[RMDB]
RNA sequence: GGGAACGACUCGAGUAGAGUCGAAAACCGUCCUGCUUGGAUGAUGCAGGUAUGUGGACUUGCUGGAAAACAGGUCCUCAUACCCUAACUGCGGAAACCGGUCGAGGCCCGGAAGGGAGCAGACUCACUGUGGGCAACCGUCGCUUGCGGGGUCGCGCAGAUGACAAUACUUCGGUAUUGUCAUCUGAAAAGAAACAACAACAACAAC
Reactivity to DMS in 0.01 (KOAc 150mM, MgCl2 10mM, bicine 150mM(pH8.5), 24C), signal-to-noise 1, nucleotides 027 to 156: c040c030g010u000c000c040u010g030c010u000u010g030g000a070u000g010a140u000g020c120a090g000g020u000a000u000g040u000g000g010a000c000u000u000g040c000u010g000g010a120a210a120a030c010a010g000g000u010c000c000u020c000a030u000a070c010c000c030u000a070a120c040u000g010c000g020g010a080a070a090c050c040g000g000u000c050g030a240g010g010c130c000c000g010g040a120a150g000g000g010a160g060c020a250g120a100c000u000c020a130c050u000g050u000g020g000g010c060a060a100c040c020g040u000c050g010c010u000u000g020c020g020g000g030g040u000c020g020c080g010
Reactivity to 2A3 in 0.01 (KOAc 150mM, MgCl2 10mM, bicine 150mM(pH8.5), 24C), signal-to-noise 4, nucleotides 027 to 156: c010c000g030u060c010c010u030g020c010u020u050g050g020a050u050g030a040u070g030c030a010g020g010u000a000u010g010u010g000g000a010c000u010u040g030c060u160g110g220a040a040a040a030c000a000g000g010u000c000c000u000c000a010u000a000c010c000c010u060a090a070c020u030g010c010g050g000a220a070a040c060c060g030g010u020c030g030a060g000g060c010c000c010g050g070a100a110g050g000g000a030g000c040a030g000a040c000u010c020a040c010u030g010u070g040g030g000c020a040a050c090c010g050u040c030g010c160u010u030g010c000g000g010g000g050u090c030g000c030g000
Source: RMDB library ARCHII, as collected in RNAgym. Chemical mapping of a 207-nucleotide RNA with DMS and 2A3. 2A3 is a SHAPE reagent: it acylates the 2'-hydroxyl of flexible nucleotides of all four kinds. The RNA was probed in 150 mM KOAc, 10 mM MgCl2 and 150 mM bicine (pH 8.5) at 24 C.